This 207-nucleotide RNA was probed chemically with 2A3 and DMS. The data come from the RNA Mapping Database (RMDB), library M2RFPK. Conditions: 150 mM KOAc, 10 mM MgCl2 and 150 mM bicine (pH 8.5), 24 C. Reactivities are given for positions 27 through 156. For DMS the reverse transcriptase was MarathonRT.

[RMDB]
RNA sequence: GGGAACGACUCGAGUAGAGUCGAAAACUCUUGUUAGGUGAAAGUUGAUGGUCGCCGUGUCAGUCCAUGCCUUUGAAAACAGUUCUAUGUAGUAGGGAGUCGAGAACCUAUGAGAGUUAGAACGUGCUAUGCCUUGGACUCUUCGGAGUCCAAGGAAUCUUAUUGGGAGAUUCGUCUCCCAAUAAGAAAAAGAAACAACAACAACAAC
Reactivity to 2A3 in 0.01 (KOAc 150mM, MgCl2 10mM, bicine 150mM(pH8.5), 24C), signal-to-noise 3, nucleotides 027 to 156: c020u040c010u030u060g100u050u080a050g000g020u050g050a090a060a060g030u070u050g050a070u050g030g020u030c010g020c020c030g040u030g040u020c020a030g010u000c030c000a030u110g050c020c040u090u090u140g120a090a080a020a020c050a020g000u040u000c030u050a070u140g030u050a040g010u010a010g000g030g060a040g050u050c030g030a020g020a160a030c000c010u010a030u060g070a080g000a000g070u050u030a020g010a030a020c040g030u030g000c050u110a060u170g050c010c000u000u000g000g000a010c000u000c000u000u010c060g080g000a000g000u000c000c000a000a000g000g000a000a000
Reactivity to DMS in 0.01 (KOAc 150mM, MgCl2 10mM, bicine 150mM(pH8.5), 24C), signal-to-noise 4, nucleotides 027 to 156: c020u000c030u000u000g020u000u000a060g020g010u000g010a060a060a130g020u000u000g020a100u000g010g030u000c030g060c020c030g030u010g010u000c030a090g000u000c040c030a060u000g010c020c020u000u000u010g010a100a090a060a090c040a060g010u000u000c030u000a080u000g020u000a280g020u000a040g020g010g000a120g020u000c110g010a240g010a100a090c010c000u000a020u000g000a240g010a160g000u000u000a020g010a030a040c020g020u000g030c020u000a060u000g000c010c000u010u010g010g010a030c000u000c010u000u010c300g040g010a030g010u000c000c000a010a010g000g000a000a010